[RMDB]
The record gives the reactivity of an RNA of 177 nucleotides to DMS and 2A3. For 2A3, 10,672 sequencing reads were counted. Values cover nucleotides 27 to 126. The data come from the RNA Mapping Database (RMDB), library OK2TRN. For 2A3 the reverse transcriptase was SuperScript II with manganese. The DMS profile rests on 9,503 reads.

RNA sequence: GGGAACGACUCGAGUAGAGUCGAAAAUGAAACGCUAAUGUUUAGUAUCUGAUAUGUAACGCCGUACCAGUCUAUAUCUACUAACUCAUAAGGACUAUAGGAUAGUUUUAGCGUUACGCUUCCGAAAAGAUUGCUUACAAUUCGUUGUAAGCAAUCUAAAAGAAACAACAACAACAAC
Reactivity to DMS in 0.01 (KOAc 150mM, MgCl2 10mM, bicine 150mM(pH8.5), 24C), signal-to-noise 9, nucleotides 027 to 126: u010g010a100a040a030c030g000c020u000a040a060u010g000u000u010u000a020g010u000a040u010c080u010g010a060u000a030u010g010u010a100a100c160g020c180c050g010u010a040c100c050a070g010u000c090u010a060u000a040u010c090u010a050c060u000a030a060c170u000c070a060u000a100a120g010g000a050c080u000a030u000a110g010g040a300u000a010g010u000u000u000u000a030g010c010g010u000u010a070c110g020c190u000u000c010c010g000a060a070a060
Reactivity to 2A3 in 0.01 (KOAc 150mM, MgCl2 10mM, bicine 150mM(pH8.5), 24C), signal-to-noise 6, nucleotides 027 to 126: u080g010a010a000a010c020g000c020u030a050a020u110g050u060u090u050a010g010u010a060u090c090u060g020a020u020a030u130g080u050a110a040c060g060c090c030g060u070a120c040c030a020g030u000c050u080a060u010a020u070c020u010a030c010u020a060a050c030u030c110a060u050a220a080g090g010a010c010u020a020u060a110g270g050a080u030a040g020u000u010u020u050a000g000c000g000u010u000a030c040g000c020u040u000c010c000g040a060a050a070